Conditions: 150 mM KOAc, 10 mM MgCl2 and 150 mM bicine (pH 8.5), 24 C. An RNA of 207 nucleotides, treated with 2A3 and read out base by base. For 2A3 the reverse transcriptase was SuperScript II with manganese. Values cover nucleotides 27 to 156.
RNA sequence: GGGAACGACUCGAGUAGAGUCGAAAAAACGCUUCAUAACCUGAAAGAAGCGCCUGUUAUCAGGACGGUUGAUCCAUUUACCGGUGCAGACCUCUGCAAACACCGGGUUGCAGAACAUCGCGACGGACAAGGGAGGAUACCUUCGGGUAUCCUCCAAGUCCACAGCAAGGUUCGCCUUGCUGUGGACAAAAGAAACAACAACAACAAC
Reactivity to 2A3 in 0.01 (KOAc 150mM, MgCl2 10mM, bicine 150mM(pH8.5), 24C), signal-to-noise 1, nucleotides 027 to 156: a000a000c030g010c010u000u000c000a080u010a240a070c000c000u000g000a010a010a010g000a000a000g000c000g100c010c000u150g030u180u160a290u300c010a030g020g000a000c020g010g030u040u000g000a170u060c000c080a010u010u060u150a090c040c010g060g020u050g000c020a020g040a180c000c100u060c040u000g000c000a020a070a000c060a040c130c140g190g050g050u010u020g010c000a010g030a060a050c010a000u070c040g000c000g120a040c020g040g000a020c080a110a050g150g020g000a000g010g000a000u000a000c000c000u100u070c180g200g000g000u000a000u000c000c000u020c000c000a000a000